The record gives the reactivity of an RNA of 177 nucleotides to 2A3 and DMS. 2A3 adducts were read by reverse transcription with SuperScript II with manganese. The RNA was probed in 150 mM KOAc, 10 mM MgCl2 and 150 mM bicine (pH 8.5) at 24 C. It was measured as part of the RMDB library OK2TST.
RNA sequence: GGGAACGACUCGAGUAGAGUCGAAAAGAUGCUGGCGUGGCUAAACUUGCCACGCUGUCAGAUGGCACAGUCUUUGAGCCUGUAAACAGUUUUCAGAAAAACCAGAAGAAGCUGGCGAGACUCCAGCGACGUAAAUGAUUUUCGAAUCAUUUACGUCAAAAGAAACAACAACAACAAC
Reactivity to 2A3 in 0.01 (KOAc 150mM, MgCl2 10mM, bicine 150mM(pH8.5), 24C), signal-to-noise 6, nucleotides 027 to 126: g060a010u060g010c030u030g010g030c010g000u010g000g000c030u080a120a140a240c120u110u100g000c000c000a010c010g000c000u000g000u010c000a000g010a090u100g020g000c010a010c020a070g050u030c070u090u110u080g040a020g020c000c020u040g080u120a070a050a030c020a040g010u050u040u110u150c040a030g140a050a110a030a030a040c030c020a010g010a070a010g050a070a020g070c010u000g000g020c020g020a060g010a020c020u010c010c000a000g000c030
Reactivity to DMS in 0.01 (KOAc 150mM, MgCl2 10mM, bicine 150mM(pH8.5), 24C), signal-to-noise 8, nucleotides 027 to 126: g010a110u000g010c030u000g010g010c000g040u000g000g010c010u010a070a130a150c260u010u010g010c000c000a010c020g010c010u000g010u000c050a060g010a120u000g000g010c030a080c070a070g000u010c090u000u010u000g000a110g020c020c010u000g000u000a090a080a110c090a040g010u000u000u000u000c080a120g010a070a080a050a070a120c030c030a100g000a130a140g000a090a150g010c010u000g000g000c040g000a130g000a110c060u000c010c010a040g010c080